[RMDB]
RNA sequence: GGGAACGACUCGAGUAGAGUCGAAAAUUCUCCUAGGCUUCCCACAGUCUAGACAGAAACGUCAUCUUAGUGGGGAACGUCUUAAGGCUGUCGCGACCUUAAGUUGUACAAUUGUGACUAGCUGAUCUUAAAACCCGUUGCUAGGUGUUAGGUAAAGGUUAGACAUGUAGUUCGCUACAUGUCUAACAAAAGAAACAACAACAACAAC
Reactivity to DMS in 0.01 (KOAc 150mM, MgCl2 10mM, bicine 150mM(pH8.5), 24C), signal-to-noise 2, nucleotides 027 to 156: u000u010c000u000c010c010u000a110g030g010c010u000u000c040c000c020a040c060a170g010u000c010u020a010g000a190c090a080g020a080a070a140c120g000u000c030a180u000c070u010u000a080g050u000g010g010g030g030a100a040c020g030u010c020u000u000a010a070g010g010c010u010g000u000c190g010c020g000a060c000c000u000u010a020a010g030u000u000g020u000a080c080a140a160u010u010g030u040g000a050c020u000a090g020c030u000g000a080u000c080u000u000a060a080a090a160c020c000c020g000u010u000g010c010u000a150g040g020u000g000u010u000a070g030g060u000a130a090a140g000
Reactivity to 2A3 in 0.01 (KOAc 150mM, MgCl2 10mM, bicine 150mM(pH8.5), 24C), signal-to-noise 4, nucleotides 027 to 156: u010u000c000u000c020c000u000a020g000g000c010u050u050c000c000c010a000c010a000g000u010c000u010a020g010a070c040a030g230a070a130a030c120g120u120c070a140u060c140u130u240a020g000u000g010g000g010g010a000a040c000g000u010c000u010u010a020a000g030g000c030u050g040u140c010g020c050g050a090c000c000u020u010a000a010g010u000u010g000u010a080c100a070a070u120u050g020u020g020a020c000u020a010g010c020u090g080a200u090c040u080u170a070a090a070a080c030c040c030g090u090u050g020c040u050a040g020g050u030g020u050u070a070g000g050u040a110a080a030g110

Structure probing data (DMS and 2A3) for a 207-nucleotide construct. The RNA was probed in 150 mM KOAc, 10 mM MgCl2 and 150 mM bicine (pH 8.5) at 24 C. DMS adducts were read by reverse transcription with MarathonRT. The 2A3 profile rests on 2,415 reads.